The record gives the reactivity of an RNA of 207 nucleotides to 2A3. Conditions: 150 mM KOAc, 10 mM MgCl2 and 150 mM bicine (pH 8.5), 24 C.
[RMDB]
RNA sequence: GGGAACGACUCGAGUAGAGUCGAAAAGUUUACGCUCCAAGAUCGGUGGAUAGCAGCCCUAUCAAUAUCUAGGAGAACUGUGCUAUGUUUAGAAGAUUAGGUAGUCUCUAAACAGAACAAUUUACCCCAUACGUUAGGACGUUCGCGUCCUAACGAAGCCCUAACACCUGUUCGCAGGUGUUAGGGCAAAAGAAACAACAACAACAAC
Reactivity to 2A3 in 0.01 (KOAc 150mM, MgCl2 10mM, bicine 150mM(pH8.5), 24C), signal-to-noise 1, nucleotides 027 to 156: g010u080u040u020a090c080g010c000u020c000c000a010a000g000a040u060c070g100g240u110g280g000a030u060a080g000c080a050g010c070c000c000u040a010u030c060a030a020u060a030u150c000u020a030g030g000a050g030a100a120c030u030g010u030g050c060u070a040u110g030u000u030u000a080g000a200a060g000a160u080u050a050g300g030u150a020g050u030c000u000c000u000a000a000a000c000a060g020a020a030c010a010a000u040u140u190a090c000c030c000c010a030u070a110c000g000u000u000a000g000g000a020c000g000u000u030c110g010c020g090u000c000c000u000a000a000c000g000a010a020
Overview
Source: RMDB library M2RFPK, as collected in RNAgym.